RNA sequence: GGGAACGACUCGAGUAGAGUCGAAAACUGUUGCACUUCGGUGCAACAGAAAACCUUUGUGUCCCGUGCUCUUUGAUCGUAUGAUCUGCCCAUUGGGCAGCGUAUACGGGAGAGCACCGGGACACUCUGGUAAAACUUCCUGCCUUCGGGCAGGAAGCGUAAUCUACGAGUUCGCUCGUAGAUUACGAAAAGAAACAACAACAACAAC
Reactivity to 2A3 in 0.01 (KOAc 150mM, MgCl2 10mM, bicine 150mM(pH8.5), 24C), signal-to-noise 7, nucleotides 027 to 156: c000u000g000u000u000g010c000a000c000u040u070c300g130g010u000g000c000a000a010c000a000g000a030a080a000a000c010c000u010u010u010g000u000g000u010c020c000c010g000u000g000c000u020c020u060u170u110g170a270u240c010g010u000a010u020g120a120u050c000u000g000c000c020c080a300u210u300g010g000g000c000a000g000c000g010u100a020u010a000c000g000g020g000a000g000a010g000c010a000c030c080g000g000g010a000c000a000c000u000c000u000g000g010u030a040a060a020a080c000u000u000c000c000u010g010c000c000u050u060c180g040g000g000c000a000g000g000a000a000g000
Reactivity to DMS in 0.01 (KOAc 150mM, MgCl2 10mM, bicine 150mM(pH8.5), 24C), signal-to-noise 2, nucleotides 027 to 156: c010u010g010u000u010g030c000a000c010u000u000c300g060g010u000g020c010a010a000c000a020g010a030a050a070a020c010c010u000u000u010g020u000g000u000c000c000c010g000u000g000c010u000c010u000u000u000g010a160u000c030g040u010a020u000g000a100u010c000u010g020c020c010c010a300u010u000g060g060g000c000a010g010c110g010u000a040u000a020c020g010g000g000a010g010a000g000c010a010c010c090g020g010g000a010c000a000c000u000c080u000g000g010u000a060a050a110a170c010u000u000c000c000u000g030c020c000u000u000c300g070g010g020c010a020g010g000a000a000g010